RNA sequence: GGGAACGACUCGAGUAGAGUCGAAAAUCAAACGCACCCGCCCAGCAACGAUCGCCACCACCACCAUCUGCGGACGAUCUGUUGGCAGAUGUGGAUGCCGAAGCGAGCAAGAAGGUAUCCCAAGAGUCUGUAGACUUAGCCAAUCUCUCGAAUCAGACUAGAAGUAAACCUUCGGGUUUACUUCUAGAAAAGAAACAACAACAACAAC
Reactivity to 2A3 in 0.01 (KOAc 150mM, MgCl2 10mM, bicine 150mM(pH8.5), 24C), signal-to-noise 1, nucleotides 027 to 156: u090c000a000a060a000c080g000c020a030c000c000c020g000c000c060c000a040g000c020a050a050c080g060a040u040c030g010c040c020a000c010c020a050c030c010a000c000c040a070u000c030u040g000c020g090g010a020c020g060a150u110c130u260g020u020u010g110g000c000a000g000a040u030g040u070g010g000a050u080g020c040c020g070a020a060g030c030g010a010g050c020a070a000g000a070a010g060g000u030a100u070c030c000c000a060a010g050a000g070u020c000u070g140u230a030g020a040c020u050u050a030g010c020c010a080a150u060c080u010c020u040c190g120a080a090u180c140a050g050a060